[RMDB]
RNA sequence: GGGAACGACUCGAGUAGAGUCGAAAAGAAAUGAGGUGCAUACAUGGGAUUACCUAAUCCGAAAAAUAGAAAGCCCACAGCUAGUGAAGUGGUUGAAUGGGCGUUAUAUAUCGCUAAAAACAAAAUAUGCAGGAUAUUAUUUCGAUAAUAUCCUGCAAAAAGAAACAACAACAACAAC
Reactivity to DMS in 0.01 (KOAc 150mM, MgCl2 10mM, bicine 150mM(pH8.5), 24C), signal-to-noise 1, nucleotides 027 to 126: g000a130a100a050u000g020a100g020g020u000g010c120a090u000a050c090a080u020g000g030g040a080u000u000a080c040c100u010a100a050u020c070c000g010a040a100a110a100a100u000a020g000a080a130a250g020c000c000c010a020c000a030g020c000u020a060g010u000g010a040a090g000u000g000g000u000u000g000a090a090u000g010g000g030c000g020u010u010a020u020a090u000a050u000c090g030c130u000a020a030a060a050a000c060a130a050a080a030u000a040